[RMDB]
RNA sequence: GGGAACGACUCGAGUAGAGUCGAAAAAAUUGGAGGAAUUGCUGUAAUUGUCAUGACUGGGCGAAAGAGGAAGUCAACCGCCCUCAAUCAUAUCGAUGAGUGGUCUAAAUUAUGUCAAAACACGUCCCUUCGUCCUUCUAUUCGUAGAAGGACGAAGAAAAGAAACAACAACAACAAC
Reactivity to 2A3 in 0.01 (KOAc 150mM, MgCl2 10mM, bicine 150mM(pH8.5), 24C), signal-to-noise 2, nucleotides 027 to 126: a000a000u150u080g050g010a060g000g020a060a040u040u030g030c000u040g020u100a070a050u070u020g030u040c120a080u110g040a030c040u070g000g020g070c020g070a060a030a020g060a000g030g100a140a010g090u000c040a040a060c040c030g000c010c000c000u000c000a010a030u010c000a010u110a040u230c050g010a020u000g010a000g010u090g010g030u040c040u070a070a100a060u060u070a080u120g020u010c020a020a000a000a070c050a070c040g100u070c000c000
Reactivity to DMS in 0.01 (KOAc 150mM, MgCl2 10mM, bicine 150mM(pH8.5), 24C), signal-to-noise 2, nucleotides 027 to 126: a040a090u020u000g000g030a120g000g010a050a110u010u010g010c040u000g010u000a050a090u000u000g010u010c100a070u000g010a060c070u000g030g020g030c090g020a030a050a090g000a060g010g000a070a050g020u000c040a100a200c140c060g010c050c030c010u010c040a030a100u000c030a060u020a080u020c180g020a050u010g010a070g010u010g000g020u000c030u000a050a030a080u000u000a010u000g010u000c070a090a060a080a080c150a060c150g000u010c020c040
This 177-nucleotide RNA was probed chemically with 2A3 and DMS. In probing experiments dimethyl sulfate is read out at A N1 and C N3, which are open when not base-paired. Source: RMDB library OK2TRN, as collected in RNAgym. Values cover nucleotides 27 to 126.